RNA sequence: GGGAACGACUCGAGUAGAGUCGAAAACUGUAAUCUCAGCACUUUGGGAAGUCAAGGCAGGAGGAUCGCUUGAGCCCACGAUUUGACUGUGUUGCCCAGGAGACCAGCCUGAGCAACAUAGUGAGACGUUAUCUCUACUGAAAGUUAAAAAAAUUAGAGAUUAUCGGUAGUUCGCUACCGAUAAUCUAAAAGAAACAACAACAACAAC
Reactivity to 2A3 in 0.01 (KOAc 150mM, MgCl2 10mM, bicine 150mM(pH8.5), 24C), signal-to-noise 2, nucleotides 027 to 156: c020u050g070u170a030a120u020c060u010c040a040g010c060a070c100u170u180u080g110g000g040a050a100g020u050c020a020a060g030g000c070a060g030g010a010g000g060a100u030c000g030c050u040u090g050a030g010c020c020c050a020c050g140a190u070u030u110g100a040c000u020g010u000g000u010u010g000c010c010c000a000g040g000a040g080a090c020c010a060g150c020c000u000g000a000g020c030a000a000c000a000u030a010g000u000g020a000g000a000c010g010u040u040a010u070c070u000c010u070a060c010u060g030a070a130a100g020u090u130a090a000a010a010a000a000a050u170u200a080g020